[RMDB]
RNA sequence: GGGAACGACUCGAGUAGAGUCGAAAAAGCAGAGCAGAAGGAGCAGCUUUGGGGGCCUAGGAUCAGGGUUUGGGGGCAGAGGCAGUCACCUUCACGUUUUCACUCUUUCUUUAGUGAUCUGAGUCCAUCCUCACAGUGACGGGUUGGAGUGGGUAUCACAUUCUGACUUAUUCGUAAGUCAGAAUGUAAAAGAAACAACAACAACAAC
Reactivity to 2A3 in 0.01 (KOAc 150mM, MgCl2 10mM, bicine 150mM(pH8.5), 24C), signal-to-noise 1, nucleotides 027 to 156: a000g040c060a030g020a000g080c050a020g040a160a000g100g000a100g040c040a020g020c000u100u030u080g030g000g010g040g010c010c020u060a080g060g060a110u130c020a020g000g140g000u060u150u150g040g030g000g020g000c060a040g030a070g050g000c020a000g030u040c020a040c040c040u050u070c120a080c070g020u050u000u010u080c030a020c020u040c000u030u130u060c000u070u210u070a110g070u080g100a070u020c070u040g010a030g060u020c020c000a030u000c020c010u040c000a080c020a040g100u080g020a010c030g010g010g010u050u100g030g000a100g030u110g000g000g010u060a030u110c020
An RNA of 207 nucleotides, treated with 2A3 and read out base by base. Source: RMDB library OK3TST, as collected in RNAgym. The reactions ran in a buffer of 150 mM KOAc, 10 mM MgCl2 and 150 mM bicine (pH 8.5), at 24 C. The 2A3 profile rests on 745 reads. Reactivities are given for positions 27 through 156.